[RMDB]
RNA sequence: GGGAACGACUCGAGUAGAGUCGAAAAAUCUGCAUGUCAGUGGUAUCGCACCUCGUGGACAGCUUAUUGCUCGUUAUGUUGGUCCACCACUUGUAAGUGAUUAAUUAAGGAAAAUCAUGACUCUCGUCCGCACGCUACAAACGCGCCCUAAUCCGGAACUUACAUGACCAUUCGUGGUCAUGUAAGUAAAAGAAACAACAACAACAAC
Reactivity to DMS in 0.01 (KOAc 150mM, MgCl2 10mM, bicine 150mM(pH8.5), 24C), signal-to-noise 2, nucleotides 027 to 156: a100u000c020u010g010c060a070u000g030u000c030a070g020u000g010g010u000a060u010c070g000c090a080c010c010u000c030g020u000g010g010a050c020a080g000c020u000u000a070u010u000g020c050u000c110g020u000u010a060u000g010u010u000g030g030u000c030c020a080c040c060a010c050u000u000g010u010a080a090g020u000g010a060u000u000a060a170u020u010a120a150g000g010a090a060a080a050u020c030a050u000g000a090c030u000c020u000c030g010u010c030c010g040c050a080c000g000c030u000a260c100a040a030a100c020g030c030g010c000c010c020u000a050a190u000c000c020g000g010a210
Reactivity to 2A3 in 0.01 (KOAc 150mM, MgCl2 10mM, bicine 150mM(pH8.5), 24C), signal-to-noise 5, nucleotides 027 to 156: a010u060c040u060g020c020a100u100g060u100c030a020g020u050g030g000u100a070u240c070g010c060a020c040c020u070c050g230u050g030g020a040c030a010g010c010u080u100a120u100u260g020c040u050c070g050u040u060a100u140g100u090u050g060g010u030c020c020a020c000c000a030c000u090u140g060u110a130a100g020u000g050a030u030u110a170a050u100u130a050a080g110g030a080a060a010a060u080c020a020u080g040a080c010u010c000u000c030g050u030c010c010g040c030a040c040g030c000u090a040c090a070a110a030c050g010c010g000c000c010c020u030a040a050u000c030c030g060g010a020